[RMDB]
RNA sequence: GGGAACGACUCGAGUAGAGUCGAAAAGAUAUGGACAGUGUUGGAUGGAACUACUCCAAGACAUCGGAAACGAUGUCGGAGCCAUCUUAGCUGUCCUAAGUCAAACCCCACAGUUCGCUGUGGGGAACGAUCAGCAAGUCUUCGGACUUGCUGAUCGAAAAGAAACAACAACAACAAC
Reactivity to 2A3 in 0.01 (KOAc 150mM, MgCl2 10mM, bicine 150mM(pH8.5), 24C), signal-to-noise 1, nucleotides 027 to 126: g060a020u100a020u190g030g000a020c000a000g000u040g210u300u300g130g000a030u000g000g060a080a060c080u300a050c030u300c030c000a140a230g020a000c010a000u000c000g010g060a140a080a020c050g010a000u000g000u010c000g010g010a000g000c010c010a020u000c020u050u080a040g020c000u010g000u000c010c010u000a040a080g030u010c040a130a000a160c000c000c000c000a000c000a000g070u140u190c190g100c190u010g030u010g060g000g000g000a020a030
Reactivity to DMS in 0.01 (KOAc 150mM, MgCl2 10mM, bicine 150mM(pH8.5), 24C), signal-to-noise 1, nucleotides 027 to 126: g000a060u000a300u000g000g000a020c000a060g000u030g000u030u010g000g020a010u000g000g030a090a010c000u010a300c020u000c010c000a070a200g030a000c000a000u010c010g000g000a230a070a300c000g050a020u020g020u000c040g010g010a030g040c000c010a000u020c000u000u070a140g000c000u000g000u000c000c080u000a020a130g020u000c000a100a300a110c000c060c000c000a000c010a000g080u000u010c300g060c060u010g000u000g000g000g030g000a030a030